RNA sequence: GGGAACGACUCGAGUAGAGUCGAAAACUGGCGGGCGUGCUGCCCGGCAACGCGGCACCCGAGGUGACCGUGGAAAGCGGUGUCGACUCGACGGGGAUGUCUUCGGAAACGAUCAUCCUGACCGCACCUCAGGGGUGGUGUUCGCACCACCCCUGAGAAAAGAAACAACAACAACAAC
Reactivity to DMS in 0.01 (KOAc 150mM, MgCl2 10mM, bicine 150mM(pH8.5), 24C), signal-to-noise 1, nucleotides 027 to 126: c140u000g000g000c000g010g000g000c000g040u000g000c200u030g000c000c000c000g000g020c000a040a100c090g000c000g010g000c010a070c010c100c170g000a210g000g020u000g000a020c000c000g040u000g020g010a010a120a120g000c080g000g000u000g000u000c040g000a080c130u030c050g000a100c060g030g000g010g070a000u000g000u020c160u010u000c010g000g030a210a110a100c000g000a030u030c000a000u000c040c000u000g000a080c080c010g000c000a110c160
Reactivity to 2A3 in 0.01 (KOAc 150mM, MgCl2 10mM, bicine 150mM(pH8.5), 24C), signal-to-noise 3, nucleotides 027 to 126: c040u010g050g030c010g000g010g000c060g080u300g100c220u260g000c010c000c000g000g010c000a020a000c030g000c010g000g000c020a030c010c010c160g070a120g020g000u090g040a210c000c000g010u040g060g060a080a130a020g060c010g000g010u010g000u050c020g110a230c090u030c120g070a060c020g030g000g000g000a010u010g020u040c190u040u010c000g000g000a070a070a080c030g010a030u090c000a000u000c000c000u020g060a070c000c040g000c010a100c010